Chemical mapping of a 207-nucleotide RNA with 2A3 and DMS.
The DMS profile rests on 2,578 reads.
The RNA was probed in 150 mM KOAc, 10 mM MgCl2 and 150 mM bicine (pH 8.5) at 24 C.
2A3 adducts were read by reverse transcription with SuperScript II with manganese.
RNA sequence: GGGAACGACUCGAGUAGAGUCGAAAAAGUGUUUAUACUAGACCUAGUAUAAAUACUACUUUUGAAUGUAUCAUAGACAUAUGAUACACAGCUUCAUAUGUCUAUGAGGCUGUGUGCAUUCAAAACAAUAGGUCUAUUGUUAAGUAGUAUUAACACACGAUGCUAGUAUGUUCGCAUACUAGCAUCGAAAAGAAACAACAACAACAAC
Reactivity to 2A3 in 0.01 (KOAc 150mM, MgCl2 10mM, bicine 150mM(pH8.5), 24C), signal-to-noise 1, nucleotides 027 to 156: a000g020u020g010u000u030u020a000u000a020c030u020a000g020a040c000c010u000a000g020u020a100u000a020a110a000u040a010c010u030a040c000u010u000u000u000g000a000a000u000g010u020a080u030c000a010u010a000g050a030c010a020u000a010u000g000a010u070a030c070a000c010a020g030c000u030u010c000a000u020a000u020g090u010c030u010a000u000g000a000g000g000c010u040g050u050g010u030g030c000a000u000u000c000a000a000a010a030c020a010a060u040a010g000g010u000c020u010a050u020u180g090u050u080a060a080g000u000a000g000u000a020u040u020a030a000c000a000c000a000
Reactivity to DMS in 0.01 (KOAc 150mM, MgCl2 10mM, bicine 150mM(pH8.5), 24C), signal-to-noise 1, nucleotides 027 to 156: a060g020u000g030u000u000u000a000u000a020c030u000a000g000a050c010c010u010a220g010u000a060u000a020a000a020u000a010c020u000a020c060u000u010u000u000g000a040a040u010g000u000a120u080c000a080u010a040g010a110c160a140u000a000u000g020a040u010a180c110a060c150a040g000c030u000u000c000a000u000a020u000g030u000c140u000a020u000g010a020g020g030c060u000g010u000g030u000g020c000a030u010u000c020a000a060a030a070c190a060a080u000a020g000g030u020c000u000a110u000u000g010u000u000a080a180g000u000a090g030u000a100u000u000a040a080c030a020c050a180